Record summary:
Structure probing data (2A3 and DMS) for a 177-nucleotide construct. Reactivities are given for positions 27 through 126. The data come from the RNA Mapping Database (RMDB), library OK2TST. DMS adducts were read by reverse transcription with MarathonRT. For 2A3, 14,711 sequencing reads were counted.

[RMDB]
RNA sequence: GGGAACGACUCGAGUAGAGUCGAAAAAUCGUCUAAGGUCGAGGAGAACAUUGAACACGACAUACUAUGCACUGACGAUGCUUCUCUUCAUAGCAUACCCACAAUAACACCAGUGGUGUCAUGCUCAGAUUAGCACUCAAUUCGUUGAGUGCUAAUCAAAAGAAACAACAACAACAAC
Reactivity to 2A3 in 0.01 (KOAc 150mM, MgCl2 10mM, bicine 150mM(pH8.5), 24C), signal-to-noise 9, nucleotides 027 to 126: a000u040c020g090u010c050u090a090a090g130g020u090c030g040a010g030g030a040g020a050a020c030a060u050u080g060a070a020c030a020c100g100a010c030a040u210a190c080u200a090u190g040c090a030c110u030g010a010c010g010a010u010g020c020u010u010c010u000c000u030u060c060a110u120a030g000c000a000u000a010c000c020c010a010c020a030a140u290a230a040c090a090c100c050a050g000u020g010g040u080g020u080c030a000u010g000c020u020c020a010
Reactivity to DMS in 0.01 (KOAc 150mM, MgCl2 10mM, bicine 150mM(pH8.5), 24C), signal-to-noise 7, nucleotides 027 to 126: a070u010c090g020u010c050u010a090a110g010g020u010c130g000a050g010g000a050g010a050a080c040a030u000u000g010a050a150c060a070c080g020a110c030a050u010a110c200u000a070u010g000c040a090c080u010g000a180c030g000a030u000g000c190u000u000c010u000c000u010u000c050a120u000a030g010c010a010u010a020c010c010c000a020c020a080a090u010a070a120c210a090c150c180a090g000u000g010g020u010g000u000c160a020u010g000c020u010c290a120